[RMDB]
RNA sequence: GGGAACGACUCGAGUAGAGUCGAAAAAUUGGUAAUUCAACAUCAAUCUCUAUAACUGCACACUUAAUGAUAGGAACAUGAUGACUUCGAAUAUUUUGCAUUCGGCAAAACUUACCAAAAUCAGCCAAUCCCGAUGAGCCUUCGGGCUCAUCGGGAUAAAAGAAACAACAACAACAAC
Reactivity to 2A3 in 0.01 (KOAc 150mM, MgCl2 10mM, bicine 150mM(pH8.5), 24C), signal-to-noise 1, nucleotides 027 to 126: a000u020u000g020g020u050a100a050u020u080c090a030a000c000a090u090c120a000a000u000c120u000c110u230a150u150a300a190c050u170g000c060a020c000a000c000u080u080a080a080u150g050a000u140a180g030g030a000a020c030a200u050g000a020u030g060a170c060u000u020c020g000a070a000u000a180u110u040u040u020g120c150a050u040u040c000g180g120c000a000a000a000a000c000u030u000a000c000c000a000a000a000a080u060c000a000g000c000c000a000